[RMDB]
RNA sequence: GGGAACGACUCGAGUAGAGUCGAAAAUGUGUGCGUGCUGUGGGGGUUCUAAGCAAAGUGAGCCGCCCAUCGGUUUCCAUGAGUUUGCUGAUGUCAGACAAAAGACACCUGUUCUUUAGCUGCCUGCCGCUAACAGUCGAUUCGUCGACUGUUAGCGAAAAGAAACAACAACAACAAC
Reactivity to DMS in 0.01 (KOAc 150mM, MgCl2 10mM, bicine 150mM(pH8.5), 24C), signal-to-noise 2, nucleotides 027 to 126: u000g010u010g030u000g000c050g010u000g010c050u010g010u010g020g010g020g000g000u010u000c050u000a090a190g040c160a070a070a170g020u000g010a040g020c000c030g020c050c020c030a020u010c060g020g000u020u010u010c030c040a040u010g000a080g010u000u000u000g000c030u000g020a070u010g000u000c030a050g030a100c130a040a060a140a120g010a070c040a060c120c090u010g020u000u000c020u000u000u010a080g010c060u010g000c070c010u010g020c070